Conditions: 150 mM KOAc, 10 mM MgCl2 and 150 mM bicine (pH 8.5), 24 C. The record gives the reactivity of an RNA of 207 nucleotides to 2A3. 2A3 is a SHAPE reagent: it acylates the 2'-hydroxyl of flexible nucleotides of all four kinds. 2A3 adducts were read by reverse transcription with SuperScript II with manganese. Values cover nucleotides 27 to 156.
[RMDB]
RNA sequence: GGGAACGACUCGAGUAGAGUCGAAAAGGGGUCACCCGUUUGACGCCUUAUAAGACAGAUCCCACCUGAAGCCUCCACGGGUGCGGCCCGAUCAAUGACGUAAGGCCGAGGGUGACGGAGGCACCCAAACAUCGUAAGUCUUCGGACUUACGAUGAAACUCUAUCUGCCGUUCGCGGCAGAUAGAGUAAAAGAAACAACAACAACAAC
Reactivity to 2A3 in 0.01 (KOAc 150mM, MgCl2 10mM, bicine 150mM(pH8.5), 24C), signal-to-noise 1, nucleotides 027 to 156: g110g040g020g020u000c010a000c000c020c000g000u110u150u180g040a010c000g000c000c000u040u000a040u000a010a070g110a060c060a020g010a130u040c030c000c000a000c000c000u040g010a190a000g000c000c020u030c000c000a030c010g030g000g010u010g080c190g030g060c070c160c100g020a060u110c060a140a270u170g090a040c080g000u050a000a000g000g000c010c010g000a060g000g020g010u000g000a000c060g000g000a000g030g000c000a060c010c000c000a040a040a000c000a000u000c000g000u030a000a000g000u000c010u000u080c300g060g000a000c010u010u010a010c000g000a000u010g000a010a010